The data come from the RNA Mapping Database (RMDB), library OK3TST. An RNA of 207 nucleotides, treated with DMS and 2A3 and read out base by base.
[RMDB]
RNA sequence: GGGAACGACUCGAGUAGAGUCGAAAAGGAGCUCGGGAUGCUCUAAAUCCUAGGAAGAGCAUCCGUACGCUCUUCCUUACCUCCAGAGCGUAUUGAAGUGUUGGAGGUUUUGAGACACUUCAGUGAGGGCUCAAAAGGACAUUGCUCUUACCGAGCAGGAGCAGUAAAUGUUCGCAUUUACUGCUCCAAAAGAAACAACAACAACAAC
Reactivity to DMS in 0.01 (KOAc 150mM, MgCl2 10mM, bicine 150mM(pH8.5), 24C), signal-to-noise 1, nucleotides 027 to 156: g030g000a100g010c000u010c060g020g050g020a060u000g010c000u000c050u000a040a060a050u010c070c010u000a140g000g030a140a070g000a010g000c010a090u000c010c110g000u000a060c260g020c000u000c000u000u020c000c000u000u000a070c040c010u000c040c060a260g000a070g020c000g020u000a060u000u010g000a080a060g020u000g010u010u000g020g030a120g040g000u010u010u000u000g000a300g110a070c010a030c010u000u000c000a020g000u000g000a070g020g030g060c000u000c010a030a030a130a110g000g020a120c230a070u000u000g010c000u000c060u000u000a110c070c070g000a170g030c060a160
Reactivity to 2A3 in 0.01 (KOAc 150mM, MgCl2 10mM, bicine 150mM(pH8.5), 24C), signal-to-noise 2, nucleotides 027 to 156: g110g010a030g030c060u070c150g130g020g000a010u040g000c000u010c010u010a080a100a060u050c020c030u030a030g000g150a020a010g010a010g010c000a040u050c060c010g010u060a020c040g010c000u010c010u020u000c000c010u010u040a030c000c000u020c000c030a000g020a000g020c020g000u050a020u000u050g050a020a000g010u020g030u040u000g080g060a150g120g000u070u020u100u060g010a000g030a010c010a000c010u020u010c010a030g000u060g110a090g040g180g010c000u010c010a060a110a000a030g030g000a010c030a100u070u080g000c000u000c020u050u110a090c060c020g000a000g000c000a030
Annotation
For 2A3, 1,436 sequencing reads were counted.